[RMDB]
RNA sequence: GGGAACGACUCGAGUAGAGUCGAAAAGUAGCUUCGGCUACAUAUAUGCGUACUACUGUAGUGCCAGCCACUGUGGACUCCCCACCUUAUCCCAAAUAGGAUAAGAGGUCCAUUGGCGGUAAUACUACAGUAUCGCGGUUACCGUAUUCGUACGGAAAAUUCCAUUUACAUUCGUGUAAAUGGAAUUAAAAGAAACAACAACAACAAC
Reactivity to 2A3 in 0.01 (KOAc 150mM, MgCl2 10mM, bicine 150mM(pH8.5), 24C), signal-to-noise 5, nucleotides 027 to 156: g000u000a000g010c020u060u050c300g090g010c020u040a000c080a010u230a000u030a030u080g020c020g010u050a100c050u000a000c010u020g000u010a000g000u010g020c020c020a030g020c000c010a160c160u160g010u030g060g030a000c020u100c040c040c000c010a030c000c000u000u000a000u030c000c000c010a190a300a300u280a120g000g010a000u000a000a000g010a000g000g000u000c000c010a020u020u060g000g000c060g010g000u060a130a120u070a120c010u000a010c000a000g000u000a010u130c000g010c010g010g000u060u110a070c000c000g000u000a020u040u120c210g030u050a000c010g000g000a110a080
Reactivity to DMS in 0.01 (KOAc 150mM, MgCl2 10mM, bicine 150mM(pH8.5), 24C), signal-to-noise 4, nucleotides 027 to 156: g030u000a000g030c010u000u000c300g050g000c000u010a020c020a070u000a080u000a080u010g000c030g010u000a110c150u000a030c000u010g010u000a020g020u000g020c070c040a300g030c000c010a020c120u020g040u010g000g000a040c020u000c300c060c030c050a300c190c010u000u010a010u010c010c020c020a040a180a230u020a060g000g000a020u000a020a000g000a220g050g000u000c020c010a030u010u010g080g010c030g030g010u000a050a190u000a010c010u000a030c010a040g010u000a010u000c040g020c020g010g000u000u010a060c010c000g000u000a030u000u000c290g020u000a030c010g020g010a060a070
The record gives the reactivity of an RNA of 207 nucleotides to 2A3 and DMS. 2A3 adducts were read by reverse transcription with SuperScript II with manganese. The RNA was probed in 150 mM KOAc, 10 mM MgCl2 and 150 mM bicine (pH 8.5) at 24 C. For DMS, 7,419 sequencing reads were counted. For DMS the reverse transcriptase was MarathonRT.